[RMDB]
RNA sequence: GGGAACGACUCGAGUAGAGUCGAAAAGCAUGCUCCGGCAUGGCAUUACAAUGGGAAAGGUUCAGAGACUAGAUGGGGGUCGGUUCUUUCCGGAUGGGAAGGGUUUAAGGUAUAGUCCGUUACAAACUGCAGUACAUUUUAGAUGUACGUCUGCUUGCAGAGUUAGGGAGUUCGCUCCCUAACUCUGAAAAGAAACAACAACAACAAC
Reactivity to 2A3 in 0.01 (KOAc 150mM, MgCl2 10mM, bicine 150mM(pH8.5), 24C), signal-to-noise 2, nucleotides 027 to 156: g020c000a000u060g020c000u040c080c090g030g020c010a000u020g050g000c000a020u070u140a120c090a100a100u080g020g050g010a020a060a060g030g000u040u110c040a000g020a020g000a120c020u060a030g000a210u140g000g010g020g040g000u010c010g020g010u090u050c050u010u050u000c020c020g020g010a060u060g030g000g050a020a020g010g040g040u030u010u080a100a000g030g000u040a030u020a120g040u040c070c030g020u050u030a050c040a160a170a020c090u100g050c030a010g010u030a010c000a030u000u040u050u150a120g070a110u010g000u020a000c020g000u020c020u060g030c000u000u030g010
Reactivity to DMS in 0.01 (KOAc 150mM, MgCl2 10mM, bicine 150mM(pH8.5), 24C), signal-to-noise 1, nucleotides 027 to 156: g080c040a040u010g010c010u010c110c100g030g050c030a160u000g010g000c030a100u000u020a050c070a100a140u010g040g030g000a080a060a080g000g000u000u000c080a130g010a160g030a050c030u000a080g020a080u010g020g000g030g040g020u010c040g010g020u020u010c030u000u000u000c020c010g010g040a090u000g040g010g040a080a090g090g000g030u000u000u000a050a020g010g000u000a090u010a120g020u000c010c020g020u000u000a250c000a040a080a050c020u000g020c040a090g020u000a010c000a020u000u000u000u000a130g010a100u000g000u000a000c010g010u000c080u000g010c040u000u020g010
Conditions: 150 mM KOAc, 10 mM MgCl2 and 150 mM bicine (pH 8.5), 24 C. Structure probing data (2A3 and DMS) for a 207-nucleotide construct. The 2A3 profile rests on 1,039 reads. Values cover nucleotides 27 to 156. For 2A3 the reverse transcriptase was SuperScript II with manganese.